Structure probing data (2A3) for a 207-nucleotide construct. The RNA was probed in 150 mM KOAc, 10 mM MgCl2 and 150 mM bicine (pH 8.5) at 24 C. It was measured as part of the RMDB library OK3TST. High 2A3 reactivity points to a flexible backbone, as in loops and unpaired stretches.
[RMDB]
RNA sequence: GGGAACGACUCGAGUAGAGUCGAAAACACUAUAGGAGAAGAAUGAUAGAGAACAGAGAGUCAAACCUGGUGACAGAAAAGCAGGUGUCAUGGUGGACCAGAGCAGGGAGACUGCACUGGUAGAUCAGUGCCUCUUGAUGUUCUUGAUCCCAUUCUACCGUCGUAUAGGUUUCGACCUAUACGACGGAAAAGAAACAACAACAACAAC
Reactivity to 2A3 in 0.01 (KOAc 150mM, MgCl2 10mM, bicine 150mM(pH8.5), 24C), signal-to-noise 2, nucleotides 027 to 156: c010a010c010u070a020u080a170g030g090a100g000a250a040g140a140a020u080g040a010u110a120g060a000g030a040a020c040a000g030a010g000a010g010u050c030a060a100a070c010c000u050g180g040u030g110a020c080a130g150a040a140a000a000g100c030a000g020g060u030g000u130c150a080u040g020g000u010g060g050a000c010c000a010g000a000g090c000a010g020g080g080a190g160a060c050u090g030c010a010c030u000g000g010u040a020g020a070u040c010a040g020u000g010c040c000u040c010u000u070g140a270u060g100u020u000c000u010u000g030a080u110c010c000c050a030u050u000c060u060a060